[RMDB]
RNA sequence: GGGAACGACUCGAGUAGAGUCGAAAAAUAAACCACCACCAGCGCGACCUGGUCCACCACGAGCUGGUCGGCGGCCUCGCGCGCUCCCGCCAGCACCGCGACCACCUCCUCGCGCAGGUACAAAAAAGGAGCAUAAAAAGUUCGCUUUUUAUGCUCCAAAAGAAACAACAACAACAAC
Reactivity to DMS in 0.01 (KOAc 150mM, MgCl2 10mM, bicine 150mM(pH8.5), 24C), signal-to-noise 1, nucleotides 027 to 126: a100u000a070a130a100c010c050a150c180c080a100c050c000a020g060c020g030c000g000a020c050c080u000g000g020u000c060c120a050c120c090a130c070g030a150g010c060u000g010g000u010c160g010g020c210g000g000c060c000u000c020g000c100g010c100g010c030u000c300c000c030g010c000c050a000g000c000a070c130c030g000c070g020a070c050c170a040c050c050u000c020c140u000c010g020c010g060c030a040g000g010u000a030c110a000a040a070a010a020a080